[RMDB]
RNA sequence: GGGAACGACUCGAGUAGAGUCGAAAACUAGUGCCAUUCGUGGCACUAGAAGGGGUCCAGCCUGGAAAGGCUGGAGGUAUUGGAAUGGUCGGGCCGCCAUUCAAGGUACGCUAUUCGUAGCGUACAAGUUAGAAAGAUAGUUCGCUAUCUUUCUAACAAAAGAAACAACAACAACAAC
Reactivity to DMS in 0.01 (KOAc 150mM, MgCl2 10mM, bicine 150mM(pH8.5), 24C), signal-to-noise 9, nucleotides 027 to 126: c000u000a000g010u000g010c000c000a040u000u010c190g030u000g010g010c000a000c000u000a000g000a120a070g010g000g000g010u000c000c000a010g010c000c000u000g010g040a120a160a010g000g010c000u000g010g010a000g000g000u010a090u010u000g010g010a020a010u000g000g010u000c010g000g000g000c010c010g000c000c010a010u000u000c010a140a090g010g010u000a000c000g010c000u000a030u000u010c200g010u000a010g010c000g010u000a000c000a040a060
Reactivity to 2A3 in 0.01 (KOAc 150mM, MgCl2 10mM, bicine 150mM(pH8.5), 24C), signal-to-noise 9, nucleotides 027 to 126: c000u000a000g000u000g000c000c010a020u040u040c250g100u070g010g000c010a000c000u000a000g000a010a020g040g020g010g010u000c000c000a000g000c000c000u060g100g130a230a120a020g010g000c000u010g010g060a000g010g000u110a160u120u300g150g010a000a000u000g000g010u010c010g010g000g000c000c000g000c010c000a000u000u000c010a000a000g150g000u000a000c000g000c000u010a030u050u180c240g090u030a010g000c000g000u000a000c000a000a010